An RNA of 207 nucleotides, treated with 2A3 and DMS and read out base by base. It was measured as part of the RMDB library OK3TST.
[RMDB]
RNA sequence: GGGAACGACUCGAGUAGAGUCGAAAAACUGUGAUUUGCUGAUAUCAGAACAGUUCGCUAUGCCCAUUGCAGAUAUACCAGCCACCGACGUUGUAUGUGGCACAGCCAACAGCGCAAGUGAACGAUUUGGGAAUGUUACCGGGUAAGUCACCGUAUAGAAAUCAAUUGAUUUCGAUCAAUUGAUUUCAAAAGAAACAACAACAACAAC
Reactivity to 2A3 in 0.01 (KOAc 150mM, MgCl2 10mM, bicine 150mM(pH8.5), 24C), signal-to-noise 7, nucleotides 027 to 156: a000c020u010g000u020g030a030u010u040u040g000c020u040g030a060u040a050u230c030a050g030a100a040c010a040g010u020u010c010g000c030u100a190u170g020c030c030c030a060u020u070g000c020a010g060a090u080a010u040a260c080c060a030g020c010c010a020c020c050g190a140c090g070u110u120g070u130a170u120g030u030g010g010c030a020c030a070g060c050c030a040a030c020a100g000c010g000c060a040a030g030u030g030a030a030c040g030a060u080u100u210g030g010g060a080a080u070g010u060u040a040c020c040g040g000g010u010a030a000g010u010c010a000c020c010g000u050a070u020a140
Reactivity to DMS in 0.01 (KOAc 150mM, MgCl2 10mM, bicine 150mM(pH8.5), 24C), signal-to-noise 4, nucleotides 027 to 156: a060c010u000g020u000g010a080u000u000u010g030c000u010g020a040u010a040u010c030a080g020a300a120c060a130g020u000u010c020g020c020u010a120u000g010c020c000c040a170u000u000g010c040a110g010a170u020a110u000a080c070c040a160g000c020c000a070c020c050g000a120c100g020u010u000g020u000a140u010g030u020g030g040c000a090c080a080g000c060c020a070a050c030a070g010c050g010c020a060a070g020u000g010a030a060c030g000a190u000u000u000g020g000g000a150a120u000g000u000u000a030c020c000g010g040g040u000a020a070g010u000c030a030c010c030g000u000a090u000a160
The DMS profile rests on 9,401 reads. For 2A3 the reverse transcriptase was SuperScript II with manganese. DMS adducts were read by reverse transcription with MarathonRT. The RNA was probed in 150 mM KOAc, 10 mM MgCl2 and 150 mM bicine (pH 8.5) at 24 C. Values cover nucleotides 27 to 156.